[RMDB]
RNA sequence: GGGAACGACUCGAGUAGAGUCGAAAAGAAAUUCCCGAUCGGCGGUAAAGUCCGCGAGCCGAACGAAAAAGGUUUGGCAGGAACCGGUGAGAUUCCGGUACCGACAGUAUAGUCUGGAUGGAAGAUGGUAGCCUCCUCUCGUUCGCGAGAGGAGGAAGCUCAAAUAUUACUUCGGUAAUAUUUGAGCAAAAGAAACAACAACAACAAC
Reactivity to DMS in 0.01 (KOAc 150mM, MgCl2 10mM, bicine 150mM(pH8.5), 24C), signal-to-noise 1, nucleotides 027 to 156: g020a090a060a260u000u000c060c010c000g000a090u020c010g010g020c000g010g030u000a110a280a080g010u000c000c010g050c040g010a300g020c000c020g030a030a130c010g020a040a150a180a190a200g000g020u000u000u000g010g050c000a070g020g010a040a020c000c000g000g000u000g010a250g000a300u000u000c000c000g000g000u000a010c000c020g000a020c040a090g000u000a080u000a170g000u000c050u010g010g020a130u000g010g000a130a090g000a090u000g030g000u000a130g020c000c000u000c000c010u010c010u000c010g020u000u000c130g040c000g010a030g010a040g000g000a010g000g010a000a040
Reactivity to 2A3 in 0.01 (KOAc 150mM, MgCl2 10mM, bicine 150mM(pH8.5), 24C), signal-to-noise 1, nucleotides 027 to 156: g000a010a060a010u030u010c000c000c010g010a180u050c000g000g030c010g010g000u000a000a000a000g000u000c000c000g030c000g000a030g020c000c000g000a010a000c000g060a240a060a030a080a030g140g020u010u010u010g000g010c020a020g010g010a000a000c000c000g000g000u000g000a000g000a000u020u000c000c000g000g000u000a000c000c000g000a000c000a000g020u000a080u100a130g060u000c070u040g060g070a090u090g050g010a090a070g010a090u130g060g090u080a070g050c010c000u000c000c000u000c000u000c000g010u040u050c200g000c000g090a000g000a000g040g000a000g000g000a000a000
An RNA of 207 nucleotides, treated with DMS and 2A3 and read out base by base. For DMS, 2,540 sequencing reads were counted. Reactivities are given for positions 27 through 156. The reactions ran in a buffer of 150 mM KOAc, 10 mM MgCl2 and 150 mM bicine (pH 8.5), at 24 C. Source: RMDB library M2RFPK, as collected in RNAgym.